Record summary: An RNA of 177 nucleotides, treated with DMS and 2A3 and read out base by base. For DMS the reverse transcriptase was MarathonRT. Values are in units of 0.01, from 0 to 300, in steps of 10. 2A3 is a SHAPE reagent: it acylates the 2'-hydroxyl of flexible nucleotides of all four kinds.
RNA sequence: GGGAACGACUCGAGUAGAGUCGAAAAGGGAACUCGGCGAAUCGUCCCCGCAUGGCAGAGACCGAGCCCCCUUCGGAAAAGGACCGGAGGAGGGAGCUAGGAGCGUGGGGGGGCCGGUGGAGCCAUGGGACAUAUCUUUGUUCGCAAAGAUAUGUCCAAAAGAAACAACAACAACAAC
Reactivity to DMS in 0.01 (KOAc 150mM, MgCl2 10mM, bicine 150mM(pH8.5), 24C), signal-to-noise 1, nucleotides 027 to 126: g010g000g020a070a110c010u010c030g010g000c000g010a050a040u000c000g010u000c010c020c000c020g020c020a000u000g010g000c020a080g010a300g000a060c010c000g000a150g010c010c000c000c000c000u010u020c060g040g000a090a090a160a160g000g000a080c010c010g010g040a120g000g010a080g000g000g000a070g010c040u010a090g040g020a180g030c060g010u030g000g020g030g010g010g000g010c020c020g000g010u000g010g010a300g000c000c010a040u000g000
Reactivity to 2A3 in 0.01 (KOAc 150mM, MgCl2 10mM, bicine 150mM(pH8.5), 24C), signal-to-noise 1, nucleotides 027 to 126: g120g000g010a040a020c030u000c030g030g000c010g010a010a010u010c000g010u020c000c000c000c000g000c010a010u010g030g000c000a000g030a000g030a200c000c010g000a020g000c010c010c000c000c000u100u050c020g010g030a070a120a060a080g090g030a030c050c070g050g040a100g020g040a140g000g050g010a010g010c010u020a030g070g070a070g070c030g010u110g000g000g000g000g000g000g050c000c000g000g030u000g000g030a010g000c000c000a000u020g030